[RMDB]
RNA sequence: GGGAACGACUCGAGUAGAGUCGAAAACGAACGUCAGUGGUGGAAGUUUGCCGGUGUCAAGGAAGAAGCCAUCAAAGAGUUGUUCUCCAUGUCGGCGACGCGCUACUACCAAGUGCUCAAUGCGCUGGAAAAGGCACCUAUUCGUAGGUGCCUUUUCAAAAGAAACAACAACAACAAC
Reactivity to DMS in 0.01 (KOAc 150mM, MgCl2 10mM, bicine 150mM(pH8.5), 24C), signal-to-noise 3, nucleotides 027 to 126: c060g020a110a090c160g000u050c110a090g050u010g000g000u010g000g020a070a060g030u030u010u050g030c000c000g020g020u000g010u020c130a100a100g010g030a070a100g020a150a120g000c040c010a080u030c110a110a120a100g000a050g000u000u000g000u000u010c000u020c000c040a050u010g020u000c050g020g020c010g010a060c070g000c040g040c020u040a030c050u000a090c030c140a060a060g000u000g000c000u030c190a080a090u020g020c000g010c030u000g000
Reactivity to 2A3 in 0.01 (KOAc 150mM, MgCl2 10mM, bicine 150mM(pH8.5), 24C), signal-to-noise 5, nucleotides 027 to 126: c010g060a020a000c040g090u100c070a050g010u040g050g000u030g030g060a150a120g040u030u080u200g060c000c000g000g050u060g050u090c080a090a060g040g030a100a050g020a010a030g080c030c010a080u140c050a150a160a000g060a000g010u010u050g040u060u000c000u000c020c010a060u180g040u100c000g020g160c000g000a040c020g000c000g000c280u040a030c000u010a030c000c030a110a020g010u010g010c010u110c170a080a200u210g020c010g020c020u040g000
Structure probing data (DMS and 2A3) for a 177-nucleotide construct.
Reactivities are given for positions 27 through 126.
The 2A3 profile rests on 2,530 reads.